[RMDB]
RNA sequence: GGGAACGACUCGAGUAGAGUCGAAAAGAUAUGGAAUCCAGUAGGGAGCACCUCGGAAACGAGAAGUGCAUCGAUCUACGAUUCCUAAGUCAAAAGAAUGUAACAUCCUUCGGGAUGUUACAUUCAAUCUUACCCUACCGUUCGCGGUAGGGUAAGAAAAAGAAACAACAACAACAAC
Reactivity to 2A3 in 0.01 (KOAc 150mM, MgCl2 10mM, bicine 150mM(pH8.5), 24C), signal-to-noise 1, nucleotides 027 to 126: g010a010u090a010u100g000g020a000a030u010c110c100a130g020u000a000g010g000g010a020g000c000a010c000c010u000c010g010g040a060a040a000c040g030a000g030a300a080g020u020g040c020a200u180c040g040a050u000c010u000a020c010g000a010u010u010c000c010u010a080a060g060u050c040a040a110a030a060g020a010a010u010g000u020a000a000c010a000u010c000c000u020u150c300g010g000g000a010u000g000u010u000a000c000a000u000u000c010a000a000
Reactivity to DMS in 0.01 (KOAc 150mM, MgCl2 10mM, bicine 150mM(pH8.5), 24C), signal-to-noise 2, nucleotides 027 to 126: g000a020u010a300u000g000g010a030a010u000c040c230a080g030u000a010g000g010g010a010g010c010a010c010c000u000c010g000g000a080a060a180c010g000a010g000a080a110g050u000g010c000a160u000c100g010a030u010c000u010a020c030g000a020u000u000c010c000u000a030a140g000u000c050a080a070a050a120g000a000a000u000g010u000a000a000c010a010u010c000c000u000u010c180g070g000g010a010u000g000u000u000a010c000a010u000u010c000a070a080